RNA sequence: GGGAACGACUCGAGUAGAGUCGAAAAACCUACACGAACGGACGGUUCGUGUCUCUCCCUAAGAUCGGGAGUAGCAGGGCAUAGGUUGGAAGAGAAACCUUUUGUGAAAAUGAUUUCUGCUUACUGCGGAUUUUGAAUAGUUCGCUAUUCAAAAUCCAAAAGAAACAACAACAACAAC
Reactivity to 2A3 in 0.01 (KOAc 150mM, MgCl2 10mM, bicine 150mM(pH8.5), 24C), signal-to-noise 8, nucleotides 027 to 126: a000c000c000u000a010c030a000c010g010a010a000c010g060g300a040c120g210g000u000u000c000g000u000g020u000c000u000c000u000c000c030c010u110a180a130g040a230u190c090g020g000g010a010g000u010a010g000c010a010g000g060g000c020a010u020a070g000g060u020u060g070g120a160a040g040a030g010a120a050a020c010c000u060u080u080u070g120u030g060a100a070a040a070u130g110a120u030u090u040c000u000g040c010u050u090a120c030u050g030c040
Reactivity to DMS in 0.01 (KOAc 150mM, MgCl2 10mM, bicine 150mM(pH8.5), 24C), signal-to-noise 4, nucleotides 027 to 126: a060c010c010u000a030c010a000c020g020a010a010c020g030g020a150c300g020g010u000u000c000g010u000g000u000c070u010c020u010c000c000c000u010a150a100g010a130u020c210g020g000g010a020g010u010a020g010c080a050g000g000g000c040a090u020a050g010g010u000u010g010g030a170a070g000a110g000a050a060a050c020c010u010u010u000u020g020u030g010a110a060a060a050u010g000a090u000u000u000c010u000g010c010u000u020a120c060u000g000c300